[RMDB]
RNA sequence: GGGAACGACUCGAGUAGAGUCGAAAAGAUCAAUGACUCUAAUUUCUUGAAAUUGGUUGCGGCAAUUGAUAUGUUUUUCCACCAUUUCAAAAAGCACGAGGAGGCUGUCAUUAGAUUUGGAACCAUCGCCACCGUACACAUUCGUGUGUACGGUGGCAAAAGAAACAACAACAACAAC
Reactivity to 2A3 in 0.01 (KOAc 150mM, MgCl2 10mM, bicine 150mM(pH8.5), 24C), signal-to-noise 1, nucleotides 027 to 126: g030a040u000c010a040a000u070g010a070c000u140c050u150a170a150u090u080u010c050u050u000g040a070a070a070u090u190g020g030u060u070g000c040g020g010c110a010a300u110u250g180a100u130a070u160g060u060u060u000u110u000c000c000a000c000c000a000u000u000u000c000a000a000a000a040a000g060c070a010c300g210a100g180g020a050g080g040c070u090g000u000c000a000u030u000a010g000a000u000u000u070g070g000a000a070c000c000a210u000c100